[RMDB]
RNA sequence: GGGAACGACUCGAGUAGAGUCGAAAAGGAAAGAGAUGAUCAGGCUAGAGUUUUGUCUUGCUACUUAAGGACAGCCAGCUACUGCCUCUCUUGAUAAGGAACACUAAGCAACUGAGACUGAUCCGGAAUGAUUACGCUGGUUCGCCAGCGUAAUCAUAAAAGAAACAACAACAACAAC
Reactivity to 2A3 in 0.01 (KOAc 150mM, MgCl2 10mM, bicine 150mM(pH8.5), 24C), signal-to-noise 2, nucleotides 027 to 126: g100g000a030a100a000g080a020g000a060u100g020a040u160c060a000g020g000c030u130a070g040a040g150u020u150u300u170g010u000c070u050u050g060c050u080a170c090u170u200a070a010g000g000a030c010a010g010c030c000a020g030c040u110a110c010u160g020c030c020u000c020u000c000u000u020g030a030u080a130a040g030g050a080a070c020a010c150u100a140a030g000c010a020a060c050u050g010a000g040a190c000u020g020a060u000c030c010g030g030a100
Reactivity to DMS in 0.01 (KOAc 150mM, MgCl2 10mM, bicine 150mM(pH8.5), 24C), signal-to-noise 2, nucleotides 027 to 126: g010g000a110a080a040g000a030g010a110u000g000a050u010c030a030g030g000c030u020a090g020a160g010u000u000u010u020g020u020c030u000u000g010c140u020a090c140u010u020a100a110g010g000a060c050a020g000c030c040a070g020c060u020a080c080u020g030c160c030u010c050u010c060u000u000g000a130u010a070a070g000g020a070a110c100a080c080u000a060a050g030c050a040a060c030u000g020a100g010a060c030u000g000a090u000c020c070g000g010a090